[RMDB]
RNA sequence: GGGAACGACUCGAGUAGAGUCGAAAACUGACGCGCGAGGGGGCCUACUUCACGAGGGAAGAGGUAGAGCAGAUGUUAAUGUUUGCUGGCGUUGACGUGAAGGAACUACCUGAGCCCGACAAGUACGGUUUUACCGUGCGUUCGCGCACGGUAAAACAAAAGAAACAACAACAACAAC
Reactivity to 2A3 in 0.01 (KOAc 150mM, MgCl2 10mM, bicine 150mM(pH8.5), 24C), signal-to-noise 3, nucleotides 027 to 126: c010u070g030a040c030g010c000g000c000g020a030g030g040g000g000g000c000c020u000a030c000u050u010c020a020c060g030a170g060g060g000a040a040g050a060g070g060u060a020g000a010g120c020a020g000a050u070g040u080u190a110a070u190g010u020u070u070g060c100u140g050g010c060g010u020u090g010a010c020g000u000g050a050a000g070g040a020a040c030u110a180c000c010u080g030a020g010c030c030c020g020a010c030a030a050g060u040a050c090g090
Reactivity to DMS in 0.01 (KOAc 150mM, MgCl2 10mM, bicine 150mM(pH8.5), 24C), signal-to-noise 2, nucleotides 027 to 126: c000u000g000a210c020g010c090g020c100g030a150g010g040g000g000g000c030c030u000a060c000u000u030c070a090c070g030a230g000g030g000a080a130g000a080g000g000u000a070g040a080g000c110a050g020a070u000g000u020u020a110a050u050g000u000u000u010g000c140u000g000g010c020g010u000u000g000a100c050g060u000g000a120a120g000g040a120a040c040u000a020c040c000u000g000a160g020c050c010c000g030a070c270a010a110g000u000a000c240g000
Background:
Chemical mapping of a 177-nucleotide RNA with 2A3 and DMS. 2A3 adducts were read by reverse transcription with SuperScript II with manganese. Reactivities are given for positions 27 through 126. Conditions: 150 mM KOAc, 10 mM MgCl2 and 150 mM bicine (pH 8.5), 24 C. The data come from the RNA Mapping Database (RMDB), library OK1LIB. For DMS the reverse transcriptase was MarathonRT. The DMS profile rests on 1,960 reads.